[RMDB]
Chemical mapping of a 177-nucleotide RNA with 2A3 and DMS.
Reactivities are given for positions 27 through 126.
It was measured as part of the RMDB library OK2TRN.
The 2A3 profile rests on 8,326 reads.
For DMS the reverse transcriptase was MarathonRT.
The RNA was probed in 150 mM KOAc, 10 mM MgCl2 and 150 mM bicine (pH 8.5) at 24 C.

RNA sequence: GGGAACGACUCGAGUAGAGUCGAAAAAGUGCGGCAUGCCGCAAUGGAUGGUGCGACUUUACCACCUUGUUCGCUCCGCCUGGGUCUUGCAGGCUCCAAAAGAGUCCCUGCGCGGCUUCUGGAAGAAGGAGUGCUUAUUAUUCGUAAUAAGCACUCCAAAAGAAACAACAACAACAAC
Reactivity to 2A3 in 0.01 (KOAc 150mM, MgCl2 10mM, bicine 150mM(pH8.5), 24C), signal-to-noise 5, nucleotides 027 to 126: a000g050u070g030c000g020g020c080a120u160g070c020c010g000c040a020a040u160g060g060a110u080g060g170u140g070c030g040a030c020u080u070u040a030c010c010a080c040c000u020u040g070u100u080c020g000c000u010c000c000g030c000c010u010g000g020g000u010c000u010u030g000c000a000g010g000c010u000c030c010a040a100a030a000g010a000g030u060c100c000c020u010g000c020g000c030g020g040c020u160u090c080u180g060g030a090a090g030a090a060
Reactivity to DMS in 0.01 (KOAc 150mM, MgCl2 10mM, bicine 150mM(pH8.5), 24C), signal-to-noise 6, nucleotides 027 to 126: a110g000u000g020c010g000g010c090a130u010g020c010c030g000c040a030a020u010g010g000a120u000g000g010u010g020c050g010a040c050u000u000u000a050c030c060a090c130c030u000u000g010u010u000c020g010c020u000c010c010g020c020c010u000g010g000g010u000c020u010u010g000c010a030g000g010c010u000c010c030a100a090a130a300g000a020g000u010c160c020c010u000g000c020g020c260g000g000c020u000u010c060u000g000g010a160a060g010a080a140